RNA sequence: GGGAACGACUCGAGUAGAGUCGAAAAUACAAAUUCUUACGCAUUAGCUGCCUAAAAAACAGCCUGCGUGAUCUUCACAAGAUUGUUUGCGUUUUGCUAGAAGGUCUUAUUUAUCAGCAAACUACGUUUGGCUACUGUCUAGUUAGUUAAAAAGAGAGGUUAUGAAUCAGUUCGCUGAUUCAUAACCAAAAGAAACAACAACAACAAC
Reactivity to 2A3 in 0.01 (KOAc 150mM, MgCl2 10mM, bicine 150mM(pH8.5), 24C), signal-to-noise 3, nucleotides 027 to 156: u280a010c070a000a110a030u120u040c040u050u060a010c010g000c000a060u120u160a030g000c000u010g000c000c010u080a070a050a010a020a020a010c000a000g010c000c000u000g000c010g000u000g000a010u010c020u030u020c020a000c010a030a020g020a030u040u060g040u020u020u040g000c000g000u000u000u000u030g030c040u040a100g000a010a000g000g000u020c000u070u130a230u070u130u110a240u170c060a000g020c000a000a000a030c010u020a010c040g020u010u040u040g010g020c010u000a010c030u080g120u230c070u000a010g050u060u030a000g000u010u050a030a040a020a070a000g090a020g000a020
Reactivity to DMS in 0.01 (KOAc 150mM, MgCl2 10mM, bicine 150mM(pH8.5), 24C), signal-to-noise 1, nucleotides 027 to 156: u020a080c040a070a100a160u000u000c030u010u000a070c000g000c010a100u010u000a070g010c010u000g000c020c000u030a000a090a170a150a090a020c010a010g030c000c070u020g000c030g050u000g010a030u000c030u000u000c030a090c030a040a080g020a070u000u000g000u000u000u000g010c040g000u000u000u000u000g020c050u020a100g010a040a040g030g040u000c060u020u000a080u010u000u010a050u060c080a130g060c050a030a060a060c030u000a080c110g010u000u000u000g000g000c010u000a010c050u000g000u000c050u010a090g000u000u000a050g020u030u000a040a050a030a100a100g020a220g000a140
Chemical mapping of a 207-nucleotide RNA with 2A3 and DMS. The RNA was probed in 150 mM KOAc, 10 mM MgCl2 and 150 mM bicine (pH 8.5) at 24 C. DMS adducts were read by reverse transcription with MarathonRT. Reactivities are given for positions 27 through 156.